Structure probing data (2A3 and DMS) for a 177-nucleotide construct.
The RNA was probed in 150 mM KOAc, 10 mM MgCl2 and 150 mM bicine (pH 8.5) at 24 C.
It was measured as part of the RMDB library OK1LIB.

RNA sequence: GGGAACGACUCGAGUAGAGUCGAAAACUAUGUACAGACAGUACAGUGGAUAAGGUCUGUAGAUAUCCAACUACAACAAUGGUACUUGCAGUGGUAUCUAUCAAGAUAGGCAGGCUAUCAUAGAAAGAAGAUGUUUAAUAUUCGUAUUAAGCAUCUUAAAAGAAACAACAACAACAAC
Reactivity to 2A3 in 0.01 (KOAc 150mM, MgCl2 10mM, bicine 150mM(pH8.5), 24C), signal-to-noise 9, nucleotides 027 to 126: c020u030a040u080g070u010a010c010a050g100a030c020a030g080u050a030c010a070g080u130g140g060a220u080a160a050g070g020u010c020u030g010u010a000g030a030u030a020u050c030c020a060a060c040u110a030c020a100a000c040a100a110u090g050g000u050a070c010u010u030g000c010a050g050u070g130g040u060a010u000c000u020a130u130c070a070a040g020a040u020a020g060g010c030a010g010g010c030u020a010u040c010a020u030a050g130a030a110a010g100
Reactivity to DMS in 0.01 (KOAc 150mM, MgCl2 10mM, bicine 150mM(pH8.5), 24C), signal-to-noise 9, nucleotides 027 to 126: c170u000a020u000g010u000a020c010a040g010a050c080a070g010u010a030c030a260g030u030g020g000a140u020a040a050g010g000u000c010u000g010u000a010g010a020u000a010u010c040c030a100a090c140u030a070c180a060a090c160a100a040u010g000g010u000a040c050u000u000g010c020a120g010u040g010g020u000a000u000c000u010a090u060c210a080a040g000a030u000a020g000g010c030a020g010g000c190u000a010u000c010a030u010a090g000a090a090a090g010